[RMDB]
RNA sequence: GGGAACGACUCGAGUAGAGUCGAAAAACGGGCAGUGGCGAUGGCAACGCGGCAGCCGCAGGGUCGACUUCUUCGCAGCCGCAACAGACGGGGCACGGGCAAAGAGGGGACCUCGUUCUGUUGGAAGUACGUAGCCAUAUUUCGAUAUGGCUACGUAAAAAGAAACAACAACAACAAC
Reactivity to 2A3 in 0.01 (KOAc 150mM, MgCl2 10mM, bicine 150mM(pH8.5), 24C), signal-to-noise 6, nucleotides 027 to 126: a010c030g010g030g010c030a050g020u050g070g020c050g050a090u060g040g040c040a050a030c050g010c010g050g010c020a010g030c030c020g000c020a030g060g020g020u050c000g010a040c010u080u050c000u050u040c070g000c060a010g020c010c020g040c010a000a010c000a000g020a000c000g020g000g010g000c070a050c090g040g030g010c090a090a140a020g070a100g030g030g020g030a060c000c000u000c010g030u110u030c010u000g010u000u010g020g010a060a030g070
Reactivity to DMS in 0.01 (KOAc 150mM, MgCl2 10mM, bicine 150mM(pH8.5), 24C), signal-to-noise 4, nucleotides 027 to 126: a110c060g000g020g030c020a080g030u010g000g020c020g010a070u030g020g000c080a080a080c090g000c040g000g000c060a060g000c070c020g030c060a070g000g020g020u000c040g000a080c100u010u000c060u000u000c050g020c080a060g000c050c030g030c030a040a010c020a030g000a010c000g000g000g010g000c110a100c130g000g010g010c100a090a130a160g010a150g000g020g000g010a210c000c010u000c010g020u010u000c000u000g010u010u020g000g010a050a060g020